[RMDB]
RNA sequence: GGGAACGACUCGAGUAGAGUCGAAAACUGAGUAGUUGUGAUUACAGGCAUGUGCCAGCGCACGCCACCACGCCCAGCUAAUUUUUUGUAUUUUAGUAGAGAUGGGGUUUCACCAUGUUGGCCAGGGUAGGCUCGAUCUUCUGACCUUGUGAUCCGCAAUUCACCUGUAUUUCGAUACAGGUGAAUUAAAAGAAACAACAACAACAAC
Reactivity to 2A3 in 0.01 (KOAc 150mM, MgCl2 10mM, bicine 150mM(pH8.5), 24C), signal-to-noise 1, nucleotides 027 to 156: c040u060g020a040g040u070a040g030u080u000g000u030g050a090u060u130a130c080a120g000g030c030a030u180g040u080g040c020c000a060g020c050g030c060a000c040g020c010c000a040c030c070a090c080g040c020c000c000a000g030c040u020a060a140u050u030u000u010u090u190g090u110a090u030u060u050u010a100g010u070a010g000a000g020a090u040g000g010g000g000u000u090u020c060a060c030c010a070u090g070u090u100g020g070c030c030a070g060g030g020u020a010g060g020c020u000c030g040a050u000c040u110u070c040u090g100a210c010c000u020u070g020u020g020a040u010c000c070g010c050
Reactivity to DMS in 0.01 (KOAc 150mM, MgCl2 10mM, bicine 150mM(pH8.5), 24C), signal-to-noise 1, nucleotides 027 to 156: c040u000g010a140g040u000a080g000u000u030g020u020g000a130u000u000a080c030a060g000g020c030a060u000g040u000g030c050c040a130g100c110g000c030a060c030g000c000c050a090c040c010a020c020g010c010c000c000a140g030c020u020a030a010u000u010u000u000u030u020g020u000a030u000u000u000u000a070g010u000a080g020a060g020a070u000g010g000g030g000u000u000u000c020a080c050c030a070u000g020u010u000g020g010c020c000a080g000g030g040u000a050g000g060c040u000c040g000a060u000c080u000u020c020u010g020a070c040c020u000u010g000u000g000a100u000c030c010g000c240